The data come from the RNA Mapping Database (RMDB), library OK3TST. Structure probing data (2A3 and DMS) for a 207-nucleotide construct. The DMS profile rests on 1,506 reads. 2A3 is a SHAPE reagent: it acylates the 2'-hydroxyl of flexible nucleotides of all four kinds. Conditions: 150 mM KOAc, 10 mM MgCl2 and 150 mM bicine (pH 8.5), 24 C.

RNA sequence: GGGAACGACUCGAGUAGAGUCGAAAAGGGCAAUACCGGGCCCGAUACCGGAAUUAGUAGUUUUCUACGAGAGGCCCAAUCUGCGGCCAAAUGCAGUGUAGGUCGAAGCGAGGACCGAGACUCGAUAAUUACGUCGAUAGAUGGACGAUUACAUCAACAUAUGCACCAUCUUCGGAUGGUGCAUAUGAAAAGAAACAACAACAACAAC
Reactivity to 2A3 in 0.01 (KOAc 150mM, MgCl2 10mM, bicine 150mM(pH8.5), 24C), signal-to-noise 1, nucleotides 027 to 156: g000g000g000c020a080a000u000a020c000c010g030g010g010c000c000c060g120a010u010a020c000c000g020g000a050a180u240u100a060g030u020a000g000u000u050u050u180c070u030a030c040g030a000g000a020g150g010c000c020c030a000a100u120c030u070g020c090g040g000c000c110a090a120a030u270g000c060a000g010u080g010u220a020g000g010u000c030g060a040a020g050c050g070a020g050g000a030c080c060g030a020g040a020c000u030c040g000a010u020a140a100u190u070a050c020g010u050c040g070a060u130a130g110a030u120g040g020a000c010g100a060u000u170a070c080a060u020c010a010a130
Reactivity to DMS in 0.01 (KOAc 150mM, MgCl2 10mM, bicine 150mM(pH8.5), 24C), signal-to-noise 1, nucleotides 027 to 156: g000g010g070c030a140a120u000a120c050c030g040g000g000c050c030c150g000a080u000a100c020c000g000g040a070a140u000u010a110g070u000a040g030u010u000u000u000c010u040a030c080g010a170g030a300g000g000c000c000c020a170a230u000c040u000g000c060g030g010c010c200a000a040a060u000g040c080a130g030u000g010u010a160g020g040u020c000g010a060a230g010c070g010a300g000g000a090c010c000g000a100g000a130c030u000c040g000a090u000a040a080u010u030a070c020g050u000c000g010a110u000a110g160a090u010g000g010a040c020g020a220u010u010a110c020a110u000c040a140a160